[RMDB]
Structure probing data (2A3 and DMS) for a 177-nucleotide construct. For 2A3, 3,559 sequencing reads were counted. Conditions: 150 mM KOAc, 10 mM MgCl2 and 150 mM bicine (pH 8.5), 24 C. The DMS profile rests on 7,898 reads.
RNA sequence: GGGAACGACUCGAGUAGAGUCGAAAAAUCUGGGUAACGGUGCCUCCGCCUCGGCGAUUGCCCGCGGCCGGCCGGUGGAAACGUCGAUGGGCCUGACACCGCUUGAGGGCUUGGUGAUGGGCACCCGACAUUGUGAGUUGUUCGCAACUCACAAUGUAAAAGAAACAACAACAACAAC
Reactivity to 2A3 in 0.01 (KOAc 150mM, MgCl2 10mM, bicine 150mM(pH8.5), 24C), signal-to-noise 5, nucleotides 027 to 126: a000u070c050u090g060g030g060u100a090a020c040g000g020u030g010c010c040u070c010c010g020c000c000u040c010g010g000c010g060a120u070u200g070c010c020c030g070c030g020g020c000c010g090g030c050c010g010g030u060g040g020a110a110a030c040g020u010c010g020a130u130g060g000g020c030c000u070g060a050c030a010c040c000g020c020u100u210g020a100g030g040g010c030u050u190g080g000u080g030a150u170g050g000g000c010a030c000c000c000g000
Reactivity to DMS in 0.01 (KOAc 150mM, MgCl2 10mM, bicine 150mM(pH8.5), 24C), signal-to-noise 4, nucleotides 027 to 126: a120u010c020u010g000g030g010u020a060a100c180g010g000u010g010c000c010u000c050c030g000c030c010u010c050g010g000c010g010a110u050u020g000c020c040c110g000c090g020g000c010c030g000g020c100c040g000g000u000g010g010a110a120a090c110g010u000c010g020a060u010g000g000g010c000c040u010g010a160c070a060c070c030g010c030u010u020g010a090g020g000g010c050u020u040g020g010u040g030a150u030g010g010g000c010a010c000c030c070g000